Chemical mapping of a 177-nucleotide RNA with 2A3 and DMS. The data come from the RNA Mapping Database (RMDB), library OK2TRN. The 2A3 profile rests on 1,372 reads. High 2A3 reactivity points to a flexible backbone, as in loops and unpaired stretches. Conditions: 150 mM KOAc, 10 mM MgCl2 and 150 mM bicine (pH 8.5), 24 C. DMS adducts were read by reverse transcription with MarathonRT.
[RMDB]
RNA sequence: GGGAACGACUCGAGUAGAGUCGAAAAAGCGCAGUGCGUUCGCCCGUUAACAGCACGCGGGAUGGGCCUUCAAGUUCGAACAAGGAUUGAUUGGCAUUGAUGACAUCGCCGUCAUCCACAUGCCAGACUCCUCCUGAGUGUUCGCACUCAGGAGGAGAAAAGAAACAACAACAACAAC
Reactivity to 2A3 in 0.01 (KOAc 150mM, MgCl2 10mM, bicine 150mM(pH8.5), 24C), signal-to-noise 1, nucleotides 027 to 126: a000g050c050g000c100a050g060u040g050c040g030u070u130c000g030c000c010c010g040u060u090a120a000c000a020g070c020a000c030g030c000g000g020g010a050u030g020g070g000c020c020u100u170c040a130a070g010u070u050c020g040a130a020c060a080a050g110g030a090u080u110g060a080u070u100g000g030c000a020u000u090g010a010u000g000a000c000a060u140c150g060c160c050g000u010c000a000u040c000c020a070c000a020u000g000c000c000a010g020a040
Reactivity to DMS in 0.01 (KOAc 150mM, MgCl2 10mM, bicine 150mM(pH8.5), 24C), signal-to-noise 2, nucleotides 027 to 126: a090g010c020g010c010a070g020u010g000c010g020u010u000c150g060c030c030c020g020u020u010a120a110c140a110g010c040a040c100g030c030g000g000g000a090u000g040g000g000c050c020u010u000c090a020a060g000u000u010c080g010a060a070c170a100a090g010g000a040u010u000g000a080u020u020g000g000c000a010u010u020g000a010u000g000a030c000a090u010c230g000c170c130g000u000c000a020u000c050c230a050c210a050u020g000c000c000a090g000a130